[RMDB]
RNA sequence: GGGAACGACUCGAGUAGAGUCGAAAAGACACGACGGAGACGUCGUGUCAAAGAGUGGGAAACCACUCAAAGAGCCACAGCUUCGGCUGUGGCUCAAGGCGCGGCAGUGUCCGCGGAACAAACUAAACAGUCAAAAUAGGUUCGCCUAUUUUGACUGAAAAGAAACAACAACAACAAC
Reactivity to 2A3 in 0.01 (KOAc 150mM, MgCl2 10mM, bicine 150mM(pH8.5), 24C), signal-to-noise 1, nucleotides 027 to 126: g010a000c000a000c000g010a000c010g040g030a070g030a050c010g040u010c020g010u030g010u000c000a010a000a010g010a000g020u020g000g010g000a010a020a080c010c000a000c000u000c000a010a030a010g000a000g020c010c010a010c000a000g030c020u110u170c290g080g030c000u020g000u030g050g000c000u000c000a000a000g000g000c000g000c000g010g020c070a210g190u020g050u290c000c000g000c020g010g000a040a010c060a040a070a010c030u170a070a030a130
Reactivity to DMS in 0.01 (KOAc 150mM, MgCl2 10mM, bicine 150mM(pH8.5), 24C), signal-to-noise 2, nucleotides 027 to 126: g000a000c000a000c000g010a030c010g020g000a220g020a180c040g020u000c000g050u000g020u010c000a020a060a080g000a010g030u000g010g000g010a120a120a220c000c000a000c000u000c000a030a090a070g000a030g040c000c000a020c000a050g020c000u000u010c190g030g030c000u030g040u000g020g030c000u000c000a020a020g000g000c040g010c000g000g010c000a180g010u000g000u000c000c010g030c000g000g000a090a140c150a060a090a090c120u030a100a110a190
The record gives the reactivity of an RNA of 177 nucleotides to 2A3 and DMS. 2A3 adducts were read by reverse transcription with SuperScript II with manganese. Values cover nucleotides 27 to 126. For DMS the reverse transcriptase was MarathonRT. The RNA was probed in 150 mM KOAc, 10 mM MgCl2 and 150 mM bicine (pH 8.5) at 24 C. The DMS profile rests on 1,294 reads.